[RMDB]
RNA sequence: GGGAACGACUCGAGUAGAGUCGAAAAUAUGUAGUUACAGCUUGUGUAUUUUGGCAACACUGAACAUUUUGGCAACAUACUUAGCAUUUCUCUGUUAGGUUUUUAAUGCCUCUGGCUUUAGGACUUUGGGAAAUAAUAGGUAUUUCCUUGAAAAUGCUAAACUACGAUCUUUCGAGAUCGUAGUUUAAAAAGAAACAACAACAACAAC
Reactivity to DMS in 0.01 (KOAc 150mM, MgCl2 10mM, bicine 150mM(pH8.5), 24C), signal-to-noise 1, nucleotides 027 to 156: u000a040u000g010u000a090g000u000u010a090c040a060g040c070u000u000g010u010g000u000a110u000u000u010u000g050g010c010a090a070c070a090c030u000g010a080a060c040a110u000u010u000u010g020g000c030a050a080c090a040u000a020c020u000u010a030g020c060a040u000u000u000c030u010c010u020g000u000u010a090g000g010u000u000u000u000u000a030a050u000g000c010c000u010c090u000g040g020c020u000u000u000a020g000g000a020c030u000u010u010g020g000g000a010a020a000u000a030a130u000a070g020g030u000a040u000u000u000c010c020u000u010g000a040a010a060a090u000g010c060
Reactivity to 2A3 in 0.01 (KOAc 150mM, MgCl2 10mM, bicine 150mM(pH8.5), 24C), signal-to-noise 3, nucleotides 027 to 156: u250a080u100g040u080a030g080u070u140a090c030a030g020c040u080u010g060u020g000u120a130u060u160u080u100g090g000c000a020a010c040a010c070u100g080a130a000c030a090u080u060u130u110g060g000c020a040a040c010a060u040a020c000u040u020a000g000c000a000u060u040u000c050u010c010u020g060u150u070a050g020g050u010u040u030u080u120a050a030u090g010c000c000u100c090u090g020g010c000u050u020u030a020g000g030a020c020u070u120u150g020g020g010a030a000a020u070a020a010u020a090g010g020u000a020u030u020u030c010c000u000u010g080a080a070a040a050u220g000c100
The record gives the reactivity of an RNA of 207 nucleotides to DMS and 2A3. For DMS the reverse transcriptase was MarathonRT. Conditions: 150 mM KOAc, 10 mM MgCl2 and 150 mM bicine (pH 8.5), 24 C.